[RMDB]
Source information:
This 177-nucleotide RNA was probed chemically with 2A3.
RNA sequence: GGGAACGACUCGAGUAGAGUCGAAAAUAUUGAGCUAACGCUGUCAACUUGGCGGUUUUCUAGCUUAUACAUAUGUGUCGCCAUCUGAAAAAUAUAAAUAUUUAUAAUUACUGCGUUUAUGCUAUAACGAUAUGAGGCAUUUCGAUGCCUCAUAUCGAAAAGAAACAACAACAACAAC
Reactivity to 2A3 in 0.01 (KOAc 150mM, MgCl2 10mM, bicine 150mM(pH8.5), 24C), signal-to-noise 1, nucleotides 027 to 126: u220a020u100u180g000a000g070c000u050a000a000c000g000c040u050g010u050c050a090a090c170u050u200g000g000c000g040g030u050u000u080u000c030u010a040g030c030u250u300a100u130a080c080a000u300a040u090g050u000g060u000c070g000c010c010a010u000c030u030g000a050a060a000a150a100u090a000u130a300a100a020u300a240u080u250u100a180u080a160a130u220u160a030c100u000g010c000g000u070u070u020a090u200g000c000u000a050u140a300a000